[RMDB]
RNA sequence: GGGAACGACUCGAGUAGAGUCGAAAAGAUAUGGAAUCGCCAGGGAGAGUGGUCGGAAACGACGACUCGAGGAUCUGGGAUUCCUAAGUCAAACUAAUGCGUUUCCGUUCGCGGAAACGCAUUAGAAGGUGGUAUAUUGGUUCGCCAAUAUACCACCAAAAGAAACAACAACAACAAC
Reactivity to DMS in 0.01 (KOAc 150mM, MgCl2 10mM, bicine 150mM(pH8.5), 24C), signal-to-noise 1, nucleotides 027 to 126: g000a030u000a300u020g000g000a000a000u000c010g010c000c000a000g000g000g010a010g030a020g020u000g020g040u000c000g000g000a040a090a190c000g000a010c000g000a010c000u000c000g000a120g000g000a020u000c000u000g000g020g010a010u000u000c020c000u000a010a060g020u010c030a080a170a260c000u000a000a000u000g010c000g000u000u000u000c000c040g010u000u010c200g010c010g000g000a000a000a000c000g020c000a000u000u000a000g000a070a110
Reactivity to 2A3 in 0.01 (KOAc 150mM, MgCl2 10mM, bicine 150mM(pH8.5), 24C), signal-to-noise 1, nucleotides 027 to 126: g000a000u050a020u120g030g050a010a000u040c100g160c300c020a000g000g040g010a010g000a010g040u120g010g020u030c010g000g060a070a090a040c020g010a000c040g030a000c010u000c000g020a150g020g000a000u000c000u000g040g040g000a010u010u010c000c000u010a080a010g060u060c040a100a000a150c020u020a000a000u010g000c020g030u020u010u010c020c040g020u060u060c300g020c010g070g020a000a000a010c020g000c010a000u000u000a000g000a010a020